The data come from the RNA Mapping Database (RMDB), library OK2TST. An RNA of 177 nucleotides, treated with DMS and 2A3 and read out base by base. For DMS, 1,202 sequencing reads were counted. DMS adducts were read by reverse transcription with MarathonRT.
RNA sequence: GGGAACGACUCGAGUAGAGUCGAAAACCACGACGAUGCGCCUGAUCUCGGCCAGCGCUUGUUCCUGGGUGACAAAGUUGGCCACCACCAGGGCAGCCAUUUCACGUGUCAUCAGAUCGUGGGAGUAGACCAUGGCACUAUUCGUAGUGCCAUGGUCAAAAGAAACAACAACAACAAC
Reactivity to DMS in 0.01 (KOAc 150mM, MgCl2 10mM, bicine 150mM(pH8.5), 24C), signal-to-noise 1, nucleotides 027 to 126: c000c000a040c030g000a020c000g000a000u000g000c040g000c030c040u000g000a000u000c000u010c230g010g000c030c060a120g010c050g000c110u000u020g000u000u000c010c040u080g010g050g020u000g000a030c020a070a050a130g030u000u010g020g020c000c000a030c050c070a060c180c050a060g000g000g000c000a270g010c010c030a020u020u000u000c050a000c300g000u000g000u020c000a020u000c050a060g000a130u000c010g050u000g010g010g000a030g000u000a120
Reactivity to 2A3 in 0.01 (KOAc 150mM, MgCl2 10mM, bicine 150mM(pH8.5), 24C), signal-to-noise 2, nucleotides 027 to 126: c000c000a000c000g000a000c010g000a000u010g010c020g000c000c010u020g010a020u000c010u040c090g040g000c040c040a130g030c150g050c070u080u130g030u110u130c010c040u080g020g010g010u060g000a000c040a040a250a090g090u240u070g160g030c080c000a000c000c000a050c000c000a010g010g000g000c000a000g000c000c000a030u000u000u020c020a010c050g050u090g140u190c020a010u000c030a040g080a270u000c010g010u030g000g050g000a010g030u030a050
The RNA was probed in 150 mM KOAc, 10 mM MgCl2 and 150 mM bicine (pH 8.5) at 24 C.